[RMDB]
RNA sequence: GGGAACGACUCGAGUAGAGUCGAAAACAAAAACGGAUUGUGUCUGUAAUCACAACAAACAAAAACAAAGGGAUUGUGUCCGUAAUCACAAAAACAAAACAAAAAGGAUUGUGUCCGUAAUCACAAAGCAUAGUGAGGUGUUCGCACCUCACUAUGCAAAAGAAACAACAACAACAAC
Reactivity to DMS in 0.01 (KOAc 150mM, MgCl2 10mM, bicine 150mM(pH8.5), 24C), signal-to-noise 1, nucleotides 027 to 126: c160a030a060a000a270a020c060g010g010a010u000u040g000u000g000u000c010u000g000u000a090a040u000c000a130c140a040a030c300a000a140a060c210a050a090a050a070a030c170a000a030a030g000g000g070a000u000u000g050u000g010u000c000c030g010u040a060a000u060c060a060c000a000a090a110a230a000c300a110a040a120a000c300a040a140a000a030a030g010g000a010u000u000g030u000g000u000c000c010g000u030a140a070u000c070a000c000a010a160a270
Reactivity to 2A3 in 0.01 (KOAc 150mM, MgCl2 10mM, bicine 150mM(pH8.5), 24C), signal-to-noise 2, nucleotides 027 to 126: c050a000a000a140a010a000c000g020g000a120u010u130g000u000g000u020c020u140g190u220a170a070u070c020a000c000a080a000c070a000a060a010c000a000a030a090a000a000c100a050a130a060g140g000g070a160u010u010g000u000g040u020c060c000g000u030a050a050u120c140a160c080a030a060a000a000a000c100a000a150a000a000c030a000a190a000a000a000g060g020a130u060u060g020u000g060u040c020c000g190u070a000a050u280c010a010c080a100a110a000